Structure probing data (DMS) for a 177-nucleotide construct. Values cover nucleotides 27 to 126. For DMS the reverse transcriptase was MarathonRT. The DMS profile rests on 475 reads.
RNA sequence: GGGAACGACUCGAGUAGAGUCGAAAAGAUAUGGACGUACAAACAAGCUCCCCACCGGUGGAACUACUGCGACGAUUCGGAAACGAAUCCAAGCAGCCACCGAGGCUUGUUUGUACGUCCUAAGUCACACACAAUACCGGUUCGCCGGUAUUGUGUGAAAAGAAACAACAACAACAAC
Reactivity to DMS in 0.01 (KOAc 150mM, MgCl2 10mM, bicine 150mM(pH8.5), 24C), signal-to-noise 1, nucleotides 027 to 126: g000a000u020a300u010g000g000a030c000g000u000a000c000a110a000a000c000a000a020g000c030u020c050c220c010c060a300c020c000g010g000u000g000g000a000a000c050u030a300c000u000g000c000g020a260c300g000a020u000u000c000g000g000a040a050a300c000g000a000a020u000c010c050a000a300g020c030a020g000c000c000a020c000c000g000a020g090g000c000u020u020g000u000u000u000g000u000a000c000g000u000c020c000u000a020a120g000u000c000a260